[RMDB]
RNA sequence: GGGAACGACUCGAGUAGAGUCGAAAAGAUAUGGACAGUCCAUUGUUGAUCCAACGGGAGUCGUUUGAUUCGGAAACGAAUCAUACGACAUCGAUCGUUGGAGUCAACAAUGGACUGUCCUAAGUCAGGUUAAAAUAACCUUCGGGUUAUUUUAACCAAAAGAAACAACAACAACAAC
Reactivity to DMS in 0.01 (KOAc 150mM, MgCl2 10mM, bicine 150mM(pH8.5), 24C), signal-to-noise 1, nucleotides 027 to 126: g010a030u000a300u000g000g010a030c000a010g020u000c000c000a030u000u000g020u000u010g010a090u010c000c000a010a000c000g010g000g000a080g020u000c000g030u010u010u010g000a040u000u010c000g010g010a180a120a280c000g000a030a020u000c010a000u000a000c000g020a010c010a160u010c190g010a110u000c020g010u000u000g010g000a040g010u000c000a000a000c020a010a020u010g000g010a000c010u000g000u000c000c000u000a010a090g000u000c070a140
Source: RMDB library TTRINS, as collected in RNAgym. Structure probing data (DMS) for a 177-nucleotide construct. For DMS, 1,703 sequencing reads were counted. Conditions: 150 mM KOAc, 10 mM MgCl2 and 150 mM bicine (pH 8.5), 24 C.